[RMDB]
RNA sequence: GGGAACGACUCGAGUAGAGUCGAAAAUGGUAGUCCGCCACUCUAAGGGGACGCCUUUAGAAGAAGAGGCUAGGUGGUAUUCCGGUGUGGGAUACUUGGUAAUAUGUAACGCUAAUUGCAUAAGAUGAAAACUUUGCAUACUUCGGUAUGCAAAGAAGAUCAGUGCAAACUUCGGUUUGCACUGAUCAAAAGAAACAACAACAACAAC
Reactivity to 2A3 in 0.01 (KOAc 150mM, MgCl2 10mM, bicine 150mM(pH8.5), 24C), signal-to-noise 2, nucleotides 027 to 156: u110g030g000u010a110g020u000c000c000g060c150c000a090c030u110c070u170a090a120g000g030g000g000a020c010g080c000c000u110u080u060a090g000a070a010g000a040a000g010a020g030g020c040u060a040g000g040u000g010g030u070a050u100u040c020c010g050g080u140g040u070g040g030g010a030u000a120c020u000u080g000g010u040a020a070u050a100u100g010u020a030a040c050g000c120u100a190a090u040u060g020c000a030u040a070a110g040a120u170g070a010a000a000a140c020u010u000u000g000c000a000u000a000c000u000u010c030g020g000u000a000u000g000c000a000a000a000g010a000a010